Structure probing data (2A3) for a 207-nucleotide construct. The RNA was probed in 150 mM KOAc, 10 mM MgCl2 and 150 mM bicine (pH 8.5) at 24 C. 2A3 adducts were read by reverse transcription with SuperScript II with manganese. Reactivities are rounded to 0.1 and cut off at 0 and 3. It was measured as part of the RMDB library M2RFPK.
[RMDB]
RNA sequence: GGGAACGACUCGAGUAGAGUCGAAAAGGGACGCCUUUAGAAGAAGAGGCUAGGUGGUAUUCCGGUGUGGGAUACUUGGUGAUAUGUAACGCUAAUUGCAUAAGAUUGUAGGACGGAAUUUACAGUCAAAACGGUCCUGCGUUCGCGCAGGACCGAAGGUUCUGUAGAUGUUCGCAUCUACAGAACCAAAAGAAACAACAACAACAAC
Reactivity to 2A3 in 0.01 (KOAc 150mM, MgCl2 10mM, bicine 150mM(pH8.5), 24C), signal-to-noise 1, nucleotides 027 to 156: g010g000g010a020c050g010c000c100u030u040u100a150g000a190a040g010a110a010g020a040g000g050c050u020a010g030g070u070g050g020u030a080u020u130c050c060g000g050u160g040u120g070g020g000a010u030a040c010u010u050g050g000u010g060a030u010a060u110g030u060a080a030c040g010c080u050a030a120u090u050g000c030a030u010a140a040g010a130u040u080g010u010a010g000g050a040c010g040g040a010a010u010u070u040a100c030a010g020u010c010a020a000a090a090c010g010g010u000c000c000u000g010c000g020u010u050c080g000c000g020c080a050g000g000a000c000c010g000a010a000